[RMDB]
RNA sequence: GGGAACGACUCGAGUAGAGUCGAAAAAUUUAGUUUGUAGGUUGAGGCGCUUAGCUAAUCAAACUGCUAAAUCCUUGGAGCUCUUGUUAAGGGUCACAACCGAGGAAAGGACAUUUUCCUUAAUCAAAUAAAUGGACCUAUUCGUAGGUCCAUUUAUAAAAGAAACAACAACAACAAC
Reactivity to DMS in 0.01 (KOAc 150mM, MgCl2 10mM, bicine 150mM(pH8.5), 24C), signal-to-noise 5, nucleotides 027 to 126: a070u040u020u020a100g000u030u010u020g010u000a070g010g020u000u000g000a050g020g020c020g000c080u010u020a010g010c000u000a080a100u040c150a070a080a080c100u020g000c010u010a070a110a080u020c060c060u010u020g000g010a140g000c030u010c080u000u000g000u000u020a020a000g010g000g040u000c050a110c070a010a040c000c010g000a030g020g000a010a020a040g020g010a140c270a100u020u000u010u000c000c000u000u010a070a100u010c090a080a050
Reactivity to 2A3 in 0.01 (KOAc 150mM, MgCl2 10mM, bicine 150mM(pH8.5), 24C), signal-to-noise 3, nucleotides 027 to 126: a000u190u180u060a120g050u050u070u080g010u050a020g000g040u020u040g070a020g050g030c060g000c300u040u100a000g000c000u020a020a010u100c070a040a000a060c030u030g020c000u050a070a070a060u130c050c050u000u070g000g030a010g050c000u000c000u050u010g020u110u170a090a040g080g070g010u090c050a030c040a110a000c000c000g000a000g000g010a030a040a020g100g080a020c060a110u030u000u070u040c000c000u000u040a090a060u200c040a120a080
The record gives the reactivity of an RNA of 177 nucleotides to DMS and 2A3. The 2A3 profile rests on 1,253 reads. For DMS, 9,292 sequencing reads were counted. For 2A3 the reverse transcriptase was SuperScript II with manganese.